[RMDB]
RNA sequence: GGGAACGACUCGAGUAGAGUCGAAAAAAGAUAUGGAUCCGAACUACUCGGACGAAACCAGCGAAGAACAAGCGUCGGAAACGACGCUUGGGAGCUGACUGACGGUACGAGCGGAUCCUAAGUCAAACUUGUACGAAUACUUCGGUAUUCGUACAAGAAAAGAAACAACAACAACAAC
Reactivity to 2A3 in 0.01 (KOAc 150mM, MgCl2 10mM, bicine 150mM(pH8.5), 24C), signal-to-noise 1, nucleotides 027 to 126: a000a020g050a040u070a080u110g000g020a030u000c020c010g000a120a100c090u190a060c010u300c100g060g070a050c030g040a050a020a050c090c010a020g080c000g200a300a080g010a100a040c000a000a000g000c040g040u000c040g000g040a110a000a070c000g010a000c000g060c050u010u010g020g000g040a010g000c000u000g020a080c030u090g120a110c060g070g150u300a050c010g000a010g000c050g010g000a010u060c040c020u020a140a050g050u060c020a060a030a030
Reactivity to DMS in 0.01 (KOAc 150mM, MgCl2 10mM, bicine 150mM(pH8.5), 24C), signal-to-noise 1, nucleotides 027 to 126: a140a130g000a040u000a250u000g090g000a000u000c000c000g000a080a040c090u000a300c040u020c000g020g010a120c050g000a100a130a140c190c000a060g020c000g000a110a140g020a160a190c020a000a000g010c020g000u010c010g010g000a090a090a050c000g040a000c000g000c000u000u000g000g040g000a120g000c060u000g000a070c040u000g000a300c050g000g000u000a200c050g000a020g000c000g030g000a020u000c010c000u000a010a060g020u000c000a100a130a200
Overview:
The record gives the reactivity of an RNA of 177 nucleotides to 2A3 and DMS. Conditions: 150 mM KOAc, 10 mM MgCl2 and 150 mM bicine (pH 8.5), 24 C. DMS adducts were read by reverse transcription with MarathonRT.